[RMDB]
Conditions: 150 mM KOAc, 10 mM MgCl2 and 150 mM bicine (pH 8.5), 24 C. This 177-nucleotide RNA was probed chemically with DMS and 2A3. Reactivities are given for positions 27 through 126. For DMS, 1,953 sequencing reads were counted.

RNA sequence: GGGAACGACUCGAGUAGAGUCGAAAAAACAGACGGUUCGCCGUCUGUUCUAUGCGGCUGAGGGUUUCCGGACGUGGGUUCGAUUCCCACCGCGUCCACCAAUGUAAGGAUCGUUCGCGAUCCUUAACGACACUUGCUAUUUCGAUAGCAAGUGUCGAAAAGAAACAACAACAACAAC
Reactivity to DMS in 0.01 (KOAc 150mM, MgCl2 10mM, bicine 150mM(pH8.5), 24C), signal-to-noise 2, nucleotides 027 to 126: a010a010c000a000g000a000c000g010g010u000u020c210g030c010c000g010u000c000u000g000u000u000c020u000a060u000g020c030g000g000c090u000g010a060g000g000g000u000u000u010c080c050g000g010a030c000g030u000g010g000g000u000u000c080g010a200u000u000c000c000c010a180c000c030g000c000g010u000c010c020a160c230c150a070a090u010g000u000a030a000g000g000a000u000c000g020u000u000c230g010c010g000a000u000c000c000u000u000a010a090
Reactivity to 2A3 in 0.01 (KOAc 150mM, MgCl2 10mM, bicine 150mM(pH8.5), 24C), signal-to-noise 1, nucleotides 027 to 126: a000a000c010a000g000a020c010g000g060u030u050c180g040c080c000g010u000c000u000g000u000u000c000u040a080u100g050c020g030g000c070u070g090a060g000g030g010u000u070u020c100c050g000g000a050c070g060u110g070g140g020u080u080c050g040a170u060u020c000c010c000a020c000c000g010c000g010u000c020c000a030c010c040a110a110u240g090u110a020a000g000g000a000u000c000g020u020u100c160g000c010g110a010u000c000c000u010u000a000a020